Description: An RNA of 177 nucleotides, treated with DMS and 2A3 and read out base by base. Reactivities are rounded to 0.1 and cut off at 0 and 3. For DMS the reverse transcriptase was MarathonRT. For 2A3 the reverse transcriptase was SuperScript II with manganese. Source: RMDB library OK1LIB, as collected in RNAgym.
RNA sequence: GGGAACGACUCGAGUAGAGUCGAAAAGGCGUCGGGUGGUCGCCGGUUGGCGCAGACCCUCCAGAGGGGAGGAUGAGGAGCUCGGCACCUGCGUCGGCGGCCCUGAGAUAGGCCAGCAGGCGGUGGCUGUGCUUCCUCUUUUCGAAGAGGAAGCACAAAAAGAAACAACAACAACAAC
Reactivity to DMS in 0.01 (KOAc 150mM, MgCl2 10mM, bicine 150mM(pH8.5), 24C), signal-to-noise 2, nucleotides 027 to 126: g000g000c090g000u010c040g020g010g050u010g000g000u010c020g010c010c000g010g040u020u020g000g000c020g000c010a040g000a140c040c010c020u020c070c060a190g030a230g000g000g040g030a070g000g000a160u020g010a160g010g040a180g020c040u020c080g000g020c070a080c020c000u010g000c020g040u010c050g040g040c030g000g000c010c020c050u060g010a130g010a090u040a090g000g000c010c010a060g000c050a020g000g000c060g000g010u000g000g000c150
Reactivity to 2A3 in 0.01 (KOAc 150mM, MgCl2 10mM, bicine 150mM(pH8.5), 24C), signal-to-noise 4, nucleotides 027 to 126: g050g010c010g040u050c000g020g000g070u100g040g000u060c020g000c010c000g000g030u180u220g020g000c000g010c020a060g020a250c010c020c000u000c010c010a090g080a200g210g170g060g000a010g050g000a040u070g020a070g080g060a020g020c040u050c030g040g020c000a070c010c040u030g020c000g050u060c010g010g010c020g020g010c010c000c030u110g030a100g020a120u160a070g090g000c000c010a020g020c020a000g030g000c020g060g010u080g050g000c040